[RMDB]
RNA sequence: GGGAACGACUCGAGUAGAGUCGAAAAAUAGAGAUUGGAGUCAUACAACCCCAGAAACCAUUCCUUAUACCUUGAGUAUUGCUGAAUUCAGUUUAGCGUGCAUUCUCUUGGCUAUUCUCAUAGUGAUAAAAUCUGUAGUCCUUCGGGACUACAGAAACCUGAUAAGACGGUUCGCCGUCUUAUCAGGAAAAGAAACAACAACAACAAC
Reactivity to 2A3 in 0.01 (KOAc 150mM, MgCl2 10mM, bicine 150mM(pH8.5), 24C), signal-to-noise 2, nucleotides 027 to 156: a000u120a020g060a000g020a010u060u050g060g000a020g080u060c060a090u080a240c130a090a130c030c030c000c000a010g080a040a040a030c040c000a080u050u060c010c000u090u200a120u060a190c000c000u050u000g010a010g050u060a040u000u220g020c020u030g040a090a100u170u070c080a110g060u160u020u080a060g020c070g050u020g100c010a010u130u000c010u010c040u010u020g010g000c000u040a030u160u010c030u000c010a060u140a080g090u130g120a060u180a050a130a050a130u010c000u000g020u000a000g000u000c020c000u000u020c060g050g000g000a000c010u000a000c000a000g000a000a000a000